[RMDB]
RNA sequence: GGGAACGACUCGAGUAGAGUCGAAAACACCCGGCCAUCCGCGCCAAGGUGGACUGGCUGGAAGCGCGGGUGCGGGAAUGCGCCUCCGUUCCGGAAAAGUUCAUUCUCAUGAUCCUCAUCGAGGGCACUAGCCAACGUUUUUCGAAACGUUGGCUAGAAAAGAAACAACAACAACAAC
Reactivity to 2A3 in 0.01 (KOAc 150mM, MgCl2 10mM, bicine 150mM(pH8.5), 24C), signal-to-noise 5, nucleotides 027 to 126: c080a040c000c000c000g000g050c070c010a010u020c030c020g010c000g010c010c020a010a020g050g020u080g030g250a300c150u130g190g000c000u000g010g000a000a000g010c010g010c020g000g000g000u010g010c010g000g000g010a030a040u080g000c020g020c000c010u000c010c010g070u190u030c050c030g040g010a080a140a010a020g030u050u060c020a020u070u020c040u010c010a100u130g070a150u070c020c010u070c010a250u180c120g020a040g000g020g010c020a020
Reactivity to DMS in 0.01 (KOAc 150mM, MgCl2 10mM, bicine 150mM(pH8.5), 24C), signal-to-noise 2, nucleotides 027 to 126: c150a210c010c000c010g000g030c130c000a000u000c000c010g020c040g050c000c020a270a300g000g030u000g000g000a260c240u080g000g030c000u010g030g000a080a160g000c000g030c040g000g000g000u000g000c220g000g010g000a120a110u000g040c020g020c060c000u000c080c000g000u000u000c020c010g000g000a030a040a080a020g000u000u000c120a000u040u010c070u000c000a010u040g000a170u020c000c000u000c020a100u020c230g040a030g000g000g020c050a210
Structure probing data (2A3 and DMS) for a 177-nucleotide construct. 2A3 adducts were read by reverse transcription with SuperScript II with manganese. Reactivities are given for positions 27 through 126. For DMS the reverse transcriptase was MarathonRT. Conditions: 150 mM KOAc, 10 mM MgCl2 and 150 mM bicine (pH 8.5), 24 C.